[RMDB]
RNA sequence: GGGAACGACUCGAGUAGAGUCGAAAAGAUCACUGUCGUGCACUGAUCCAUGCUGUUAUCACACUCGAAUCGCAGGAAGUGAAAGAAAUACUCAACUUUGUCCUACAACAGCAAAUAGACCUGCUACCUCCUCGGAUACUUUCGAGUAUCCGAGGAGAAAAGAAACAACAACAACAAC
Reactivity to 2A3 in 0.01 (KOAc 150mM, MgCl2 10mM, bicine 150mM(pH8.5), 24C), signal-to-noise 2, nucleotides 027 to 126: g030a000u010c000a000c070u090g070u200c070g060u100g090c050a020c120u020g030a010u000c020c010a050u060g020c000u010g030u110u090a130u120c040a010c000a020c090u110c020g110a120a130u130c090g040c050a020g030g050a120a010g020u050g060a030a040a040g100a010a080a020u140a090c060u050c030a040a050c020u080u020u120g040u060c010c010u090a090c010a100a010c000a030g000c000a040a050a100u110a020g070a070c000c000u010g010c000u100a110c010
Reactivity to DMS in 0.01 (KOAc 150mM, MgCl2 10mM, bicine 150mM(pH8.5), 24C), signal-to-noise 1, nucleotides 027 to 126: g020a060u000c010a030c140u000g000u000c140g070u000g000c030a050c040u000g010a100u000c020c080a080u000g000c060u020g000u030u000a060u000c030a050c110a050c010u000c080g020a050a040u010c080g000c110a050g000g060a070a020g030u000g000a030a060a070g040a030a030a110u020a090c070u000c060a100a040c070u000u000u000g000u000c000c040u020a020c090a000a040c100a020g000c070a000a020a120u010a070g040a140c050c030u030g000c020u000a110c100